RNA sequence: GGGAACGACUCGAGUAGAGUCGAAAAGAUUCCUCGUUGUUGAGCGAGGUUUAAACAAAUCGACCACACAAACGUAGACCCGACUACGGAUUUAUAAAUUAAGGCAUUAAGUGUGAUAAGGAGACAAAAAACGAUGUUGUGUUCGCACAACAUCGAACAUAAUAUCGCACUUCGGUGCGAUAUUAUGAAAAGAAACAACAACAACAAC
Reactivity to 2A3 in 0.01 (KOAc 150mM, MgCl2 10mM, bicine 150mM(pH8.5), 24C), signal-to-noise 5, nucleotides 027 to 156: g070a120u120u110c000c000u000c000g000u000u020g010u020u020g010a010g000c010g000a000g000g020u040u140u040a020a010a010c040a000a020a000u000c000g010a020c000c010a020c000a000c020a080a190a000c000g000u000a000g050a070c000c010c020g080a060c000u020a000c010g010g010a000u030u220u050a140u080a050a060a040u150u120a040a030g040g000c040a030u060u150a140a080g000u010g000u010g020a010u060a070a050g100g030a080g020a060c150a020a150a020a030a010a040c020g000a000u000g000u000u000g000u000g010u040u090c210g020c060a000c000a000a000c000a010u000c000g000a000a000
Reactivity to DMS in 0.01 (KOAc 150mM, MgCl2 10mM, bicine 150mM(pH8.5), 24C), signal-to-noise 3, nucleotides 027 to 156: g020a240u000u020c000c000u000c040g030u000u000g020u000u000g000a170g010c040g010a030g030g010u000u000u000a030a100a070c060a060a070a110u000c020g020a110c000c030a050c030a050c060a110a100a120c060g000u000a060g000a070c030c000c040g020a230c110u000a080c040g020g000a090u000u000u020a060u010a090a060a140u000u000a060a160g020g020c060a090u000u010a040a150g030u000g000u000g010a090u000a070a080g000g010a170g040a090c100a020a030a050a090a040a150c040g050a040u000g010u000u010g050u010g020u000u000c260g000c030a050c010a010a030c000a020u000c000g010a000a070
The record gives the reactivity of an RNA of 207 nucleotides to 2A3 and DMS.
For DMS, 4,929 sequencing reads were counted.
Conditions: 150 mM KOAc, 10 mM MgCl2 and 150 mM bicine (pH 8.5), 24 C.
Source: RMDB library M2RFPK, as collected in RNAgym.